[RMDB]
RNA sequence: GGGAACGACUCGAGUAGAGUCGAAAAGUUGAAGUGUUCGCACUUCAACAAACGCUCAACUCAUGGAGCGCAAGACCAAUAGCUACAUAUUCGACAUGAGAAAAAGACUGUAGUUCGCUACAGUCAAGUUUCUACUGACGUUCGCGUCAGUAGAAACAAAAGAAACAACAACAACAAC
Reactivity to DMS in 0.01 (KOAc 150mM, MgCl2 10mM, bicine 150mM(pH8.5), 24C), signal-to-noise 1, nucleotides 027 to 126: g020u010u000g000a000a020g010u000g020u000u000c270g070c000a030c000u010u000c000a020a020c000a040a070a050c040g000c000u000c000a050a070c010u000c020a040u000g000g010a020g000c040g010c120a080a040g040a280c010c000a080a060u020a130g010c090u000a080c100a080u000a020u000u000c060g010a240c000a020u000g000a010g010a100a080a170a130a120g000a000c000u000g010u000a010g020u010u010c300g010c000u010a000c010a010g000u000c010a010a020
Reactivity to 2A3 in 0.01 (KOAc 150mM, MgCl2 10mM, bicine 150mM(pH8.5), 24C), signal-to-noise 2, nucleotides 027 to 126: g000u000u010g010a000a000g000u000g010u050u120c170g040c040a010c000u000u000c000a000a010c010a020a020a000c010g030c000u000c000a040a060c030u000c020a020u030g030g000a010g000c030g000c040a070a000g060a030c010c040a050a120u070a060g070c090u170a090c080a210u210a230u170u280c100g080a040c030a000u040g010a020g000a070a040a010a010a000g000a000c010u000g000u000a000g000u010u070c230g000c070u000a000c010a000g020u000c000a000a010